The record gives the reactivity of an RNA of 177 nucleotides to DMS and 2A3. For DMS the reverse transcriptase was MarathonRT. The RNA was probed in 150 mM KOAc, 10 mM MgCl2 and 150 mM bicine (pH 8.5) at 24 C.
RNA sequence: GGGAACGACUCGAGUAGAGUCGAAAAGCUACAAUCAUUUUCGUACCAGUGCGUUCCUCCAAACCACCACGCUCACGUUGAUGCGAAGUUGGUCUGAAGGAGUUCAUUGGUACACAAAUCAUAAGAGUAGAAUAUGGUGUUUCGACACCAUAUUCUAAAAAGAAACAACAACAACAAC
Reactivity to DMS in 0.01 (KOAc 150mM, MgCl2 10mM, bicine 150mM(pH8.5), 24C), signal-to-noise 6, nucleotides 027 to 126: g000c050u000a080c120a130a090u050c130a050u010u000u000u000c180g010u010a010c020c000a010g010u000g010c050g000u000u000c000c000u010c010c000a000a040a000c010c010a020c040c080a200c010g030c010u000c030a200c290g010u070u030g010a050u020g010c010g010a100a090g020u000u000g020g010u000c040u020g010a040a000g000g000a020g010u000u010c010a000u000u000g010g010u000a010c000a060c160a010a050a060u010c170a060u020a110a100g000a130g010
Reactivity to 2A3 in 0.01 (KOAc 150mM, MgCl2 10mM, bicine 150mM(pH8.5), 24C), signal-to-noise 9, nucleotides 027 to 126: g050c030u120a090c110a090a110u110c060a150u070u060u050u150c070g000u000a000c000c000a010g000u000g000c010g020u020u000c000c000u000c000c000a020a010a000c000c000a000c020c010a060c030g000c000u030c010a130c170g190u130u280g040a050u150g010c000g020a060a020g030u090u040g000g010u000c010u010g000a010a000g000g000a010g000u000u000c000a000u000u000g000g000u000a000c000a000c000a000a020a010u100c070a040u080a250a060g050a040g150